About this RNA: Conditions: 150 mM KOAc, 10 mM MgCl2 and 150 mM bicine (pH 8.5), 24 C. The record gives the reactivity of an RNA of 207 nucleotides to 2A3. It was measured as part of the RMDB library M2RFPK. The 2A3 profile rests on 864 reads.
[RMDB]
RNA sequence: GGGAACGACUCGAGUAGAGUCGAAAAGGCUGCGUAUCACUCUAGGGUACGUGAUAGUGCGAUAUAAGAAGCACUGGUACAUGCCGGCAGGGACAGUUAAGUGAUGGCCGCAGUCUCGUGUCCCUGCAAAAGGAGUUCUCGUUCGCGAGAACUCCAAGGUUGGAAAAGACUUCGGUCUUUUCCAACCAAAAGAAACAACAACAACAAC
Reactivity to 2A3 in 0.01 (KOAc 150mM, MgCl2 10mM, bicine 150mM(pH8.5), 24C), signal-to-noise 2, nucleotides 027 to 156: g010g010c030u010g000c020g020u030a010u040c000a010c030u090c130u170a080g060g020g020u040a040c080g020u040g030a030u050a030g010u030g020c020g040a070u050a020u080a300a090g080a200a000g020c010a000c010u000g000g020u040a010c020a000u090g000c020c010g030g000c070a060g010g010g060a080c020a090g080u110u270a110a010g000u050g080a020u060g060g000c030c010g020c000a000g030u010c020u000c040g080u090g030u000c000c000c010u000g030c000a030a020a020a070g010g010a010g000u000u020c010u010c010g000u030u030c100g030c030g110a010g000a000a000c010u000c000c010a000a000